Overview: This 207-nucleotide RNA was probed chemically with 2A3 and DMS. It was measured as part of the RMDB library OK3TST.
RNA sequence: GGGAACGACUCGAGUAGAGUCGAAAAGCUAGUCGGAGACGACUAGCAUCGAUCAGUUCGCUGAUCGUAAGGAGCAGUCUUUCGCAGUCGACGCUCCGAUAGGCAUGGCAGACUGCGGUACUGUAAAAUCAGGAUAAUUAAUUAAUGAAGCCAUGCGAUCCCUCGUAAUCUUCGGAUUACGAGGGAUAAAAGAAACAACAACAACAAC
Reactivity to 2A3 in 0.01 (KOAc 150mM, MgCl2 10mM, bicine 150mM(pH8.5), 24C), signal-to-noise 2, nucleotides 027 to 156: g000c000u000a010g000u000c000g040g040a080g020a100c020g000a000c000u000a000g000c020a010u030c000g000a000u000c000a030g030u050u080c140g020c110u000g000a000u000c010g010u030a070a140g020g000a000g000c110a020g060u000c030u030u120u000c020g020c010a000g000u030c000g010a000c010g010c000u000c000c020g010a120u120a060g020g000c000a000u000g000g000c000a000g000a010c000u000g020c000g010g010u020a010c000u000g030u050a050a100a090a180u150c010a010g020g050a040u080a160a070u300u090a080a050u130u130a020a060u150g100a130a040g000c000c000a000u000g020c000g010
Reactivity to DMS in 0.01 (KOAc 150mM, MgCl2 10mM, bicine 150mM(pH8.5), 24C), signal-to-noise 1, nucleotides 027 to 156: g050c000u000a010g000u000c010g010g000a300g000a300c030g020a040c050u000a000g030c000a040u000c000g020a020u000c000a000g040u000u010c260g070c030u000g000a050u000c000g000u020a090a140g010g000a030g050c010a060g000u000c000u000u000u000c060g030c000a070g000u000c010g010a300c080g000c020u000c000c000g010a040u000a070g000g010c010a000u000g040g020c000a050g020a020c000u010g010c030g010g040u000a000c020u000g000u000a080a150a150a120u010c020a010g000g000a170u010a080a090u000u010a090a160u000u020a140a030u010g020a150a210g010c010c010a020u000g000c000g000